[RMDB]
RNA sequence: GGGAACGACUCGAGUAGAGUCGAAAAGAUAUGGACUGUAGAGGAUCCUGGACAAUGACGGCUGUGAGCUCGGAAACGAGCUCACAGCUAAGACAGUCCGGGAUCUACCCACCUACAGUCCUAAGUCGUACAUAUUUGUCUUCGGACAAAUAUGUACAAAAGAAACAACAACAACAAC
Reactivity to DMS in 0.01 (KOAc 150mM, MgCl2 10mM, bicine 150mM(pH8.5), 24C), signal-to-noise 1, nucleotides 027 to 126: g020a100u000a300u000g010g050a020c000u000g000u000a010g020a110g000g030a000u000c020c000u020g050g000a020c040a160a150u000g010a120c300g000g030c000u000g000u000g030a050g060c000u000c020g000g000a040a020a260c000g010a030g000c000u000c000a000c060a000g010c000u000a010a070g000a290c120a140g030u000c000c000g020g000g020a010u000c000u020a010c070c040c050a300c110c010u000a020c010a030g000u020c000c000u000a000a070g000u000c070
Source: RMDB library TTRINS, as collected in RNAgym. This 177-nucleotide RNA was probed chemically with DMS. The reactions ran in a buffer of 150 mM KOAc, 10 mM MgCl2 and 150 mM bicine (pH 8.5), at 24 C. DMS adducts were read by reverse transcription with MarathonRT.